[RMDB]
Chemical mapping of a 207-nucleotide RNA with 2A3 and DMS. DMS adducts were read by reverse transcription with MarathonRT. As a SHAPE reagent, 2A3 marks flexible, mostly unpaired nucleotides at the ribose 2'-OH. The DMS profile rests on 3,242 reads. The RNA was probed in 150 mM KOAc, 10 mM MgCl2 and 150 mM bicine (pH 8.5) at 24 C.

RNA sequence: GGGAACGACUCGAGUAGAGUCGAAAACCGGAGCCUGGCAUCAGCUAGAGGGAUCUACCGAUGGGUUCGGUCGCGGGACUCGUCGGGACACCAACCGCGACUGGGAUCGUCAUCCUGGCUAGUUCGCGUGAUCAGGAGAUCCGAGUAGAGGCAUAGCCACACAUGUUCAGUUCGCUGAACAUGUGUGAAAAGAAACAACAACAACAAC
Reactivity to 2A3 in 0.01 (KOAc 150mM, MgCl2 10mM, bicine 150mM(pH8.5), 24C), signal-to-noise 3, nucleotides 027 to 156: c000c000g010g020a020g080c000c020u030g000g000c010a080u040c060a110g000c010u050a030g020a090g100g030g020a030u020c040u140a090c030c030g020a020u070g030g060g000u010u010c010g000g010u010c030g000c000g030g010g030a060c040u040c090g050u020c010g010g010g010a010c020a010c040c030a020a040c030c010g020c010g050a000c020u010g020g000g070a050u030c010g040u060c050a020u010c010c010u030g070g110c020u030a030g100u110u080c060g000c050g090u050g030a150u040c020a010g020g010a020g030a030u000c000c000g010a040g010u210a030g010a040g000g030c070a130u140a040g030c050
Reactivity to DMS in 0.01 (KOAc 150mM, MgCl2 10mM, bicine 150mM(pH8.5), 24C), signal-to-noise 2, nucleotides 027 to 156: c040c010g030g020a130g000c020c020u000g040g000c040a100u000c040a060g000c000u000a070g000a300g040g010g010a080u000c050u000a150c000c020g000a040u000g040g020g040u010u000c020g020g000u000c060g050c070g010g000g000a110c050u000c050g020u000c080g010g030g020a080c060a120c060c030a080a140c020c000g000c020g000a060c070u000g010g030g020a020u000c070g000u030c070a300u000c020c000u020g000g000c010u000a060g000u000u000c030g060c080g000u000g010a100u000c000a080g010g010a180g020a080u000c010c010g010a110g010u000a060g020a070g020g020c070a170u000a170g000c020